[RMDB]
RNA sequence: GGGAACGACUCGAGUAGAGUCGAAAACCUGGUUUAGGGUUCCAGGCUAGCCCUAUCUAUCGGUCGACAUGCGAGCGCUUAAGCUCAAAUUGAGUGGCUGAGUUAGUGGUGAACGUAUCCCUAUGUUAAAACGGUAGCUGCUUCGGCAGCUACCGAAGAAUAUUCCCAUGUUCGCAUGGGAAUAUUCAAAAGAAACAACAACAACAAC
Reactivity to DMS in 0.01 (KOAc 150mM, MgCl2 10mM, bicine 150mM(pH8.5), 24C), signal-to-noise 2, nucleotides 027 to 156: c050c030u000g050g030u000u010u000a080g030g020g040u000u000c010c030a090g010g030c000u000a300g020c000c000c010u030a000u010c030u000a060u000c010g110g040u000c020g010a220c050a030u010g000c300g000a020g060c020g060c240u000u010a140a170g010c000u030c000a000a140a120u000u000g010a150g010u000g000g020c040u010g010a090g020u000u000a010g030u000g020g020u000g000a070a060c130g020u000a080u000c000c000c010u010a170u000g000u000u010a060a090a070a120c030g000g030u000a020g020c000u010g020c030u020u000c300g050g000c020a020g010c010u000a000c010c000g020a010a020
Reactivity to 2A3 in 0.01 (KOAc 150mM, MgCl2 10mM, bicine 150mM(pH8.5), 24C), signal-to-noise 2, nucleotides 027 to 156: c000c000u010g030g020u040u070u070a020g000g010g010u060u000c010c000a000g000g000c040u020a020g010c000c000c000u000a010u010c010u020a170u070c010g000g000u010c000g030a030c000a020u010g020c000g010a010g010c030g020c170u280u300a120a090g000c000u000c010a060a300a040u010u020g020a060g040u170g030g000c010u000g000a000g010u010u010a080g000u110g180g010u030g050a050a040c070g020u070a080u090c000c000c000u020a060u060g030u050u120a050a080a010a040c010g010g000u000a000g000c000u010g020c010u010u050c130g080g000c000a000g000c010u000a010c000c000g000a000a000